[RMDB]
RNA sequence: GGGAACGACUCGAGUAGAGUCGAAAAGAUAUGGAUAUGGGCCUCUUUUGACGCGUGUCGGAAACGAUAAACGCGAUAAGAGGCCAUAUCCUAAGUCAAAAGAGCGAUUAGUUCGCUAAUCGCUCAAUCACUACGGGGAGUUCGCUCCCCGUAGUGAAAAAGAAACAACAACAACAAC
Reactivity to DMS in 0.01 (KOAc 150mM, MgCl2 10mM, bicine 150mM(pH8.5), 24C), signal-to-noise 2, nucleotides 027 to 126: g010a040u010a300u000g000g020a020u000a000u000g010g010g050c000c000u010c000u010u000u000u010g010a160c040g010c020g030u000g000u010c010g000g020a130a120a250c000g000a010u000a020a100a090c000g020c000g010a100u000a000a010g000a010g020g010c000c000a010u000a000u000c000c010u020a050a040g000u010c020a080a080a160a050g000a010g040c020g000a010u000u010a000g010u000u020c230g040c000u000a000a000u000c000g020c000u000c000a010a070
Reactivity to 2A3 in 0.01 (KOAc 150mM, MgCl2 10mM, bicine 150mM(pH8.5), 24C), signal-to-noise 1, nucleotides 027 to 126: g040a030u090a030u130g010g010a020u010a050u030g260g250g300c040c010u060c050u260u130u080u300g250a100c010g020c000g000u020g000u000c010g020g000a080a060a040c010g010a000u030a040a300a020c000g010c000g010a020u050a020a030g010a000g000g020c000c000a020u000a000u030c000c000u010a000a010g010u000c020a000a000a060a200g000a000g000c000g000a000u080u000a020g020u060u110c300g040c200u010a000a020u000c010g000c000u030c000a000a000